[RMDB]
RNA sequence: GGGAACGACUCGAGUAGAGUCGAAAAGUCUGUGCGUUUCCAUUUGAGUAUCCUGAAAACGGGCUUUUCAGCAUGAAACGUACAUAUUAAAUAGUAGGAGUGCAUAGUGGCCCGUAUAGCAGGCAUUGAGGCGAGGAUUGUUUCGACAAUCCUCGAAUACAAGCAAUUAGUUCGCUAAUUGCUUGUAAAAAGAAACAACAACAACAAC
Reactivity to 2A3 in 0.01 (KOAc 150mM, MgCl2 10mM, bicine 150mM(pH8.5), 24C), signal-to-noise 4, nucleotides 027 to 156: g040u030c090u080g070u050g050c040g020u000u020u000c030c010a050u090u050u060g050a050g070u120a100u140c010c000u020g010a040a030a040a020c000g010g000g020c030u060u100u070u110c060a020g000c000a020u070g040a020a150a000c020g060u060a010c010a010u100a040u050u300a050a100a060u170a040g050u010a020g020g130a040g030u030g020c040a080u090a150g110u060g050g010c020c020c000g000u000a010u040a020g010c010a000g030g000c020a030u040u160g080a060g060g070c010g000a000g000g000a010u000u000g020u020u070u080c130g040a020c010a000a000u000c000c000u000c000g000a000a000
Reactivity to DMS in 0.01 (KOAc 150mM, MgCl2 10mM, bicine 150mM(pH8.5), 24C), signal-to-noise 3, nucleotides 027 to 156: g000u000c040u010g010u020g000c090g030u000u000u000c000c020a260u010u000u000g020a160g020u010a060u000c040c030u060g000a050a030a150a090c030g010g030g040c050u000u010u000u000c050a230g010c040a090u000g010a060a050a030c020g020u000a270c060a110u010a080u000u010a080a050a150u010a190g040u000a070g020g000a290g030u000g000c020a110u000a140g010u000g010g030c010c010c040g020u000a040u020a090g020c030a040g020g020c050a130u000u000g010a130g010g030c010g020a030g000g010a030u010u000g010u000u000u000c240g010a100c000a010a010u000c000c000u000c000g000a010a070